[RMDB]
This 207-nucleotide RNA was probed chemically with 2A3.
RNA sequence: GGGAACGACUCGAGUAGAGUCGAAAACAUUUAGUCUUUACCAAUUCGGCAGAGAAUAGAGAGAUGCACGUCAUUGUGGAUGAGCUCAGAAAGAAAAAGAGAUUCAUUUCAGCUGCUGUAGAGCUUAUGAUAAAUUGUUUGGUAUGGAAUGUGAAUGCAUUCCUGCGUCGUUCGCGACGCAGGAAUGAAAAGAAACAACAACAACAAC
Reactivity to 2A3 in 0.01 (KOAc 150mM, MgCl2 10mM, bicine 150mM(pH8.5), 24C), signal-to-noise 1, nucleotides 027 to 156: c060a000u100u040u110a030g040u040c040u070u070u030a100c010c010a090a070u130u050c060g000g000c000a040g010a000g050a190a020u080a040g040a020g010a000g000a070u020g030c010a000c030g020u040c100a150u120u000g010u050g090g010a020u050g000a000g020c000u000c030a020g110a130a230a000g100a000a080a010a000a000g080a010g000a020u150u090c020a020u090u000u040c020a000g010c020u000g000c020u060g000u050a060g030a060g020c070u130u090a090u040g030a080u030a210a160a070u150u070g020u050u050u090g010g000u030a000u020g000g010a040a030u140g030u090g100a030a020u150g020
2A3 adducts were read by reverse transcription with SuperScript II with manganese. It was measured as part of the RMDB library OK3TST. Reactivities are given for positions 27 through 156. Conditions: 150 mM KOAc, 10 mM MgCl2 and 150 mM bicine (pH 8.5), 24 C.